[RMDB]
RNA sequence: GGGAACGACUCGAGUAGAGUCGAAAACUUAUCUCUACUGCUCGUGAUGGCGUAAGGCGAGGCGAUAACUUCCAUAGUGUCUUAACAACAUUCAUUGACGCAGCACGAGGCCCCGCAGGUGUGGAGUCGUAUACCAGAUGUUCGCAUCUGGUAUACGAAAAGAAACAACAACAACAAC
Reactivity to 2A3 in 0.01 (KOAc 150mM, MgCl2 10mM, bicine 150mM(pH8.5), 24C), signal-to-noise 2, nucleotides 027 to 126: c010u070u110a070u060c010u000c010u020a040c010u010g040c000u010c020g030u030g020a040u060g020g030c000g010u040a040a030g020g030c050g030a030g050g020c070g030a060u080a110a090c020u100u050c020c030a070u060a110g150u120g020u060c010u040u040a120a040c020a010a020c000a020u010u200c000a030u010u240g010a030c090g000c010a000g040c010a000c070g010a010g040g000c010c020c010c020g000c050a040g000g030u080g040u050g030g050a050g010u000
Reactivity to DMS in 0.01 (KOAc 150mM, MgCl2 10mM, bicine 150mM(pH8.5), 24C), signal-to-noise 2, nucleotides 027 to 126: c140u000u000a130u000c030u000c020u000a080c010u000g010c020u010c000g070u020g040a030u000g010g010c270g010u000a040a080g030g000c040g030a030g020g010c210g010a110u020a080a130c080u000u000c000c070a080u000a070g020u030g000u000c050u010u010a080a080c180a080a080c010a050u000u000c050a060u000u020g000a050c100g000c050a030g000c030a030c120g000a020g000g000c080c000c000c030g070c100a040g000g010u000g030u020g000g030a090g030u000
This 177-nucleotide RNA was probed chemically with 2A3 and DMS. The DMS profile rests on 1,007 reads. 2A3 adducts were read by reverse transcription with SuperScript II with manganese. The reactions ran in a buffer of 150 mM KOAc, 10 mM MgCl2 and 150 mM bicine (pH 8.5), at 24 C. It was measured as part of the RMDB library 15KREP.